[RMDB]
RNA sequence: GGGAACGACUCGAGUAGAGUCGAAAAGCAUGGUCAUCUGCACCCGGUUUAUCAGUAAAGAGAUCCUGACCAUCCGGGAGGCCGUAUGGCUCACGGACAACACUUACAAGUACGAGGACCUGGUGAGAGUACUGAUUUACUUCGGUAAAUCAGUACUAAAAGAAACAACAACAACAAC
Reactivity to DMS in 0.01 (KOAc 150mM, MgCl2 10mM, bicine 150mM(pH8.5), 24C), signal-to-noise 5, nucleotides 027 to 126: g010c090a050u010g000g000u000c040a070u000c080u000g010c030a100c010c020c040g000g000u000u000u000a080u000c020a120g000u000a050a070a080g010a130g000a160u010c040c010u000g000a040c010c030a090u000c020c000g000g010g010a120g000g000c000c000g000u000a030u000g000g020c150u000c040a040c130g010g000a020c060a070a070c090a090c040u000u000a040c060a080a110g020u000a070c130g010a070g010g010a050c010c010u000g000g020u010g010a110g010
Reactivity to 2A3 in 0.01 (KOAc 150mM, MgCl2 10mM, bicine 150mM(pH8.5), 24C), signal-to-noise 4, nucleotides 027 to 126: g020c030a060u140g030g030u080c030a090u040c110u120g020c010a020c010c000c000g000g010u060u040u010a210u050c030a040g020u080a060a120a020g100a020g010a100u020c000c010u000g000a020c020c000a020u030c060c000g010g030g030a100g120g130c010c020g090u160a070u130g000g010c020u030c030a030c090g000g020a020c010a100a020c030a100c050u060u110a020c040a150a090g080u040a070c070g020a050g000g040a020c000c000u030g000g030u040g040a070g000